[RMDB]
RNA sequence: GGGAACGACUCGAGUAGAGUCGAAAAUGGCCCUCGGCCCCAGCGGCCUCCUACCUCCCUUGGCCGGCCGGCGUGCUGGUGGGGCCGGGGGACUAGCGUAGCCGUUAGGCCGAGCGCGUGCUCGACAGGCUACGUCCAUAUUCGUAUGGACGUAGCCAAAAGAAACAACAACAACAAC
Reactivity to DMS in 0.01 (KOAc 150mM, MgCl2 10mM, bicine 150mM(pH8.5), 24C), signal-to-noise 1, nucleotides 027 to 126: u000g000g000c010c000c010u000c000g020g010c000c010c010c010a040g030c030g000g010c010c020u020c030c000u020a120c080c080u000c100c030c090u000u010g020g010c140c040g010g000c070c090g000g000c070g010u000g020c030u000g000g010u000g010g000g020g020c010c020g000g000g030g000g000a000c020u000a040g030c010g020u010a100g000c020c000g010u010u020a130g000g070c030c010g000a040g010c010g030c150g020u010g020c000u000c000g010a070c180a160